[RMDB]
RNA sequence: GGGAACGACUCGAGUAGAGUCGAAAAGAAGAUACAGGACUGUGGGGCUGCUGCAGGCUGAACCAGCUAUAGCAGGGGAGUUGACUGGUGAAUGAAGGUGGUUUCGUCACGCGGACAUGCGUCUCUCAGGCGAUCAGAGUUACCUGGAGCCGCUCUAGAUAAUAUCACUGUUCGCAGUGAUAUUAUCAAAAGAAACAACAACAACAAC
Reactivity to DMS in 0.01 (KOAc 150mM, MgCl2 10mM, bicine 150mM(pH8.5), 24C), signal-to-noise 2, nucleotides 027 to 156: g010a120a120g030a180u010a070c030a070g010g010a120c060u000g030u020g010g030g030g040c010u000g010c020u000g020c050a110g040g030c060u010g020a020a100c030c010a090g020c030u000a100u000a110g030c040a110g000g010g010g010a130g000u010u010g010a080c000u000g010g010u000g020a110a070u010g000a040a060g020g020u010g000g020u020u000u030c070g010u010c020a080c000g010c060g000g000a090c080a070u010g010c030g010u000c010u010c010u020c010a090g020g050c020g000a060u010c060a210g000a190g000u000u000a040c020c000u010g000g000a050g010c040c020g010c000u000c020u000a160
Reactivity to 2A3 in 0.01 (KOAc 150mM, MgCl2 10mM, bicine 150mM(pH8.5), 24C), signal-to-noise 4, nucleotides 027 to 156: g050a030a010g050a010u130a120c060a050g000g120a040c060u080g020u070g050g010g030g020c030u040g010c010u030g030c030a020g030g000c030u030g010a040a060c050c020a030g030c030u090a070u170a180g040c040a020g000g000g030g010a040g030u080u090g070a070c010u020g000g020u030g040a040a090u100g020a040a010g020g050u070g020g000u030u050u070c020g030u030c020a020c080g060c040g030g030a010c020a070u150g010c010g010u010c010u000c000u010c020a010g000g000c040g030a060u090c060a030g070a020g110u100u080a010c000c000u000g010g020a000g000c010c010g000c010u000c000u010a040
The record gives the reactivity of an RNA of 207 nucleotides to DMS and 2A3. Conditions: 150 mM KOAc, 10 mM MgCl2 and 150 mM bicine (pH 8.5), 24 C. The DMS profile rests on 5,317 reads. For 2A3, 5,161 sequencing reads were counted. Reactivities are rounded to 0.1 and cut off at 0 and 3. DMS adducts were read by reverse transcription with MarathonRT. Source: RMDB library OK3TST, as collected in RNAgym.